[RMDB]
About this RNA
The record gives the reactivity of an RNA of 177 nucleotides to DMS and 2A3. For DMS the reverse transcriptase was MarathonRT. Reactivities are given for positions 27 through 126. It was measured as part of the RMDB library OK2TST. The reactions ran in a buffer of 150 mM KOAc, 10 mM MgCl2 and 150 mM bicine (pH 8.5), at 24 C. 2A3 adducts were read by reverse transcription with SuperScript II with manganese.
RNA sequence: GGGAACGACUCGAGUAGAGUCGAAAAGGUGAUGGGCAGCAUUUAUCAGUAUAUCCACGUGGCGUUUCAGGGAUCGUUUGCCUGCAUUACCGUCGGCUUGAUAGUUGGGGCGCUGGCGGAACGAAUAGCGCUCCUAAUCAUUCGUGAUUAGGAGCGCAAAAGAAACAACAACAACAAC
Reactivity to DMS in 0.01 (KOAc 150mM, MgCl2 10mM, bicine 150mM(pH8.5), 24C), signal-to-noise 2, nucleotides 027 to 126: g010g030u000g010a080u020g000g010g010c020a070g020c060a070u010u000u010a080u010c080a100g010u000a090u000a120u010c070c030a090c090g010u000g010g030c080g030u000u010u000c050a150g020g010g010a050u000c090g010u000u010u000g010c030c020u000g020c070a060u000u000a090c080c040g020u020c070g020g010c050u010u010g020a080u000a050g010u010u000g000g010g020g010c110g030c010u010g000g000c060g000g000a030a050c110g000a070a100u000a110
Reactivity to 2A3 in 0.01 (KOAc 150mM, MgCl2 10mM, bicine 150mM(pH8.5), 24C), signal-to-noise 1, nucleotides 027 to 126: g090g010u060g010a120u070g000g030g080c000a000g000c010a040u130u180u080a130u140c040a010g050u090a030u000a040u220c010c010a040c090g040u060g040g100c000g000u030u050u060c080a090g000g030g100a080u040c040g060u030u110u040g070c010c000u020g060c020a020u000u190a030c000c040g010u020c000g040g050c000u040u140g050a020u070a170g110u050u100g000g000g010g040c060g000c000u010g030g000c000g060g070a040a060c080g050a030a060u100a040